[RMDB]
RNA sequence: GGGAACGACUCGAGUAGAGUCGAAAAGAUAUGGACCGUAGGGAGCUGGUAUUCGGAAACGAAUAUGCAGCAUCGAUCUACGUCCUAAGUCACAAAACUGUACACCACCUUCGGGUGGUGUACAGAAGAAUAAGCUAAAGUUCGCUUUAGCUUAUUCAAAAGAAACAACAACAACAAC
Reactivity to 2A3 in 0.01 (KOAc 150mM, MgCl2 10mM, bicine 150mM(pH8.5), 24C), signal-to-noise 5, nucleotides 027 to 126: g010a000u040a030u080g010g000a030c130c270g020u000a000g030g010g000a030g000c010u000g020g010u010a010u010u000c020g000g020a050a020a010c010g010a010a000u040a020u250g300c020a000g000c010a030u200c010g000a010u000c010u010a000c000g000u010c010c000u010a060a020g020u030c010a010c080a150a080a080a100c030u000g000u020a000c000a000c020c000a010c010c010u030u110c270g090g000g000u000g000g000u000g000u000a000c000a000g000a000a000
Reactivity to DMS in 0.01 (KOAc 150mM, MgCl2 10mM, bicine 150mM(pH8.5), 24C), signal-to-noise 6, nucleotides 027 to 126: g010a030u000a230u000g010g000a020c150c150g020u000a010g010g000g000a030g030c000u000g000g010u000a000u000u000c000g010g000a040a040a070c000g010a010a000u000a000u000g010c010a010g020c000a220u000c160g010a080u000c010u000a000c030g000u000c000c000u010a030a090g000u000c020a160c180a090a070a090a130c000u000g000u000a000c010a010c000c010a010c000c000u000u010c230g030g010g020u000g000g000u000g000u000a000c000a000g000a030a060
Annotation:
The data come from the RNA Mapping Database (RMDB), library TTRDEL. This 177-nucleotide RNA was probed chemically with 2A3 and DMS. The RNA was probed in 150 mM KOAc, 10 mM MgCl2 and 150 mM bicine (pH 8.5) at 24 C. Reactivities are given for positions 27 through 126.